[RMDB]
RNA sequence: GGGAACGACUCGAGUAGAGUCGAAAACUAAGAACUACGGUUCUUAGAAGGUCGUCUACGGACGACCAGGCUCGCGUGAGCGAGCCACUUGUUCGUGAGAACAAGAAGUGGAAGACUACGGUCUUCCACAGACAAGGCUACGGCCUUGUCAAGAGCAUCGUACGCGAUGCUCACAAGUAACUACGGUUACUUGAAGGAACAGCUGUACUGGGCAGUUACAGCAGUCGUAUGGUAACACAUGCGGCGUUCCGAAAUACCAUGCCUGUAGUACAGAGUUCGCUCUGUACAAAAGAAACAACAACAACAAC
Reactivity to 2A3 in 0.01 (KOAc 150mM, MgCl2 10mM, bicine 150mM(pH8.5), 24C), signal-to-noise 5, nucleotides 027 to 266: c000u000a000a010g000a000a000c010u040a020c280g090g000u000u000c000u000u010a010g030a070a050g000g000u000c000g000u000c000u020a060c300g130g000a000c000g010a000c000c000a000g000g000c000u010c010g020c020g070u150g060a110g020c010g000a000g030c000c000a020c000u000u010g000u000u000c020g040u060g120a120g000a030a000c000a010a000g060a150a030g010u000g000g000a000a000g000a000c010u030a050c300g100g000u000c000u000u000c000c000a000c000a000g000a000c000a000a000g000g010c000u020a010c300g120g000c000c000u000u000g000u010c000a000a040g000a000g000c000a000u010c000g030u030a030c210g010c010g110a010u010g000c000u000c000a020c000a000a000g000u010a000a000c010u030a030c280g130g000u000u000a000c000u000u010g050a080a070g000g000a000a000c000a010g000c000u000g000u010a010c030u060g000g000g020c010a000g000u020u010a000c000a000g000c000a000g010u000c000g000u010a000u000g020g000u050a070a010c060a010c040a110u010g000c000g000g010c020g010u000u000c000c000g000a060a090a040u220a110c060c050a060u050g010c010c010u040g100u110a060
Reactivity to DMS in 0.01 (KOAc 150mM, MgCl2 10mM, bicine 150mM(pH8.5), 24C), signal-to-noise 1, nucleotides 027 to 266: c000u020a010a010g000a000a010c000u010a110c100g050g000u000u000c000u000u000a010g010a160a100g000g000u000c000g020u000c010u020a220c220g040g010a010c000g020a000c000c000a030g000g020c000u000c000g070c020g010u030g000a300g010c030g030a010g030c020c020a020c010u010u000g000u010u000c000g040u030g000a170g000a030a000c000a000a000g000a300a140g020u000g000g030a010a010g000a010c010u000a140c170g060g000u010c000u010u000c000c000a000c030a000g020a000c000a010a050g000g010c000u000a060c220g010g000c040c000u020u010g020u000c020a140a070g010a010g000c000a020u000c000g010u000a110c190g040c040g050a000u010g010c010u000c000a030c010a000a010g010u020a000a020c000u000a080c160g060g010u000u000a000c000u000u000g010a250a170g000g010a040a000c010a080g050c020u010g040u000a020c030u010g000g000g000c000a100g000u030u010a000c010a010g030c000a300g000u000c000g020u000a020u000g020g000u000a150a060c120a110c000a000u000g000c000g000g000c000g000u000u010c000c010g000a110a060a060u000a080c230c130a040u000g000c000c000u000g030u020a280
Chemical mapping of a 307-nucleotide RNA with 2A3 and DMS. For 2A3, 11,936 sequencing reads were counted. The data come from the RNA Mapping Database (RMDB), library POS240. Conditions: 150 mM KOAc, 10 mM MgCl2 and 150 mM bicine (pH 8.5), 24 C. DMS adducts were read by reverse transcription with MarathonRT.